[RMDB]
RNA sequence: GGGAACGACUCGAGUAGAGUCGAAAAUAAUUAUCACAUAGCGCAAACGGUCAUUUGUGUAUCACUAUUCAUAAGAUUAACUAUUUACCAGUGGUAAUAAAAAUAAAAGUAAGUCAAUGGACAACAAUAAAUGAGUCUUCUUCGGAAGACUCAUUUAAAAAGAAACAACAACAACAAC
Reactivity to DMS in 0.01 (KOAc 150mM, MgCl2 10mM, bicine 150mM(pH8.5), 24C), signal-to-noise 1, nucleotides 027 to 126: u020a030a120u000u000a020u000c000a030c000a070u020a050g020c050g000c040a020a070a030c060g000g000u060c070a110u000u020u000g000u020g050u010a110u020c070a050c220u000a000u000u020c070a050u030a070a020g000a040u030u020a100a060c020u070a020u020u000u000a080c100c090a100g000u040g000g010u000a020a060u030a000a110a010a020a110u040a060a030a150a090g000u000a120a010g000u010c020a070a050u040g000g000a020c060a010a100c240a040a110
Reactivity to 2A3 in 0.01 (KOAc 150mM, MgCl2 10mM, bicine 150mM(pH8.5), 24C), signal-to-noise 1, nucleotides 027 to 126: u170a000a000u000u080a040u080c030a050c100a100u170a010g100c170g030c160a070a060a060c100g000g170u000c000a000u000u000u060g020u000g040u000a030u090c030a070c040u250a100u240u120c000a030u200a150a170g000a000u040u030a050a060c010u000a040u010u040u130a140c090c100a010g000u000g010g060u020a000a000u000a060a030a060a000a000u180a010a020a000a000g000u080a000a100g040u000c030a040a230u080g080g080a000c000a230a000c000a050a050
The record gives the reactivity of an RNA of 177 nucleotides to DMS and 2A3.
The reactions ran in a buffer of 150 mM KOAc, 10 mM MgCl2 and 150 mM bicine (pH 8.5), at 24 C.
DMS adducts were read by reverse transcription with MarathonRT.
Reactivities are rounded to 0.1 and cut off at 0 and 3.